The record gives the reactivity of an RNA of 207 nucleotides to 2A3. 2A3 adducts were read by reverse transcription with SuperScript II with manganese. For 2A3, 1,284 sequencing reads were counted.
RNA sequence: GGGAACGACUCGAGUAGAGUCGAAAACUGCCGCCGGGACGCAGUGAUCCUCGCAGGGUCGCACGGUCGCCUCGGGUCGGCCUCGUGUCGGCUCGACCUGCGAGGGGAGCGAGUGGCGAGCCUGACCAAAACUUUCUCGCCUUCGGGCGAGAAAGAACGAUACUUCAGGCUUCGGCCUGAAGUAUCGAAAAGAAACAACAACAACAAC
Reactivity to 2A3 in 0.01 (KOAc 150mM, MgCl2 10mM, bicine 150mM(pH8.5), 24C), signal-to-noise 2, nucleotides 027 to 156: c020u000g000c000c010g040c060c020g040g080g170a090c030g000c000a160g220u010g020a000u000c020c000u010c000g020c010a000g030g030g000u190c070g040c080a150c100g060g010u070c010g040c020c030u020c020g010g030g000u010c000g000g020c010c030u100c130g280u300g010u020c000g000g000c000u000c010g050a080c000c000u000g000c010g000a000g000g000g000g000a010g030c010g010a100g120u130g030g000c010g020a070g000c010c050u010g030a030c000c030a010a020a000a090c000u000u000u000c000u000c000g030c000c010u050u090c180g100g000g000c030g000a000g010a000a000a000g000a030a000